RNA sequence: GGGAACGACUCGAGUAGAGUCGAAAAAGAUAUGGAAGAACUAGUAGCUGAACAACAGCUCAGGGAACUACUACGGUCGGAAACGACCGUAGCCCUGAGACAUGUUCCGAAAGUUCUUCCUAAGUCACCAGAAGGAUAAGUUCGCUUAUCCUUCUGGAAAAGAAACAACAACAACAAC
Reactivity to DMS in 0.01 (KOAc 150mM, MgCl2 10mM, bicine 150mM(pH8.5), 24C), signal-to-noise 3, nucleotides 027 to 126: a100g000a030u000a300u010g000g000a010a010g000a010a000c000u000a080g010u010a200g000c280u030g030a010a000c010a020a100c300a170g020c000u000c000a010g020g000g010a150a020c060u020a300c010u000a010c000g000g020u010c000g000g010a070a080a150c000g010a000c020c000g020u000a000g010c010c020c000u000g000a000g000a020c130a080u000g000u000u000c020c010g000a130a200a130g010u000u000c000u000u000c010c000u000a000a080g000u000c040a170
Reactivity to 2A3 in 0.01 (KOAc 150mM, MgCl2 10mM, bicine 150mM(pH8.5), 24C), signal-to-noise 1, nucleotides 027 to 126: a000g010a040u100a040u130g000g000a000a000g000a000a000c020u020a010g120u040a010g080c260u110g010a020a010c010a050a020c050a100g070c000u000c000a000g020g000g040a090a020c100u270a020c020u000a000c300g000g000u000c020g020g050a110a060a080c020g020a000c000c000g010u000a000g030c000c000c000u010g010a000g040a000c010a030u060g000u030u010c010c000g020a060a000a000g000u010u020c000u000u000c000c010u000a000a000g000u000c000a010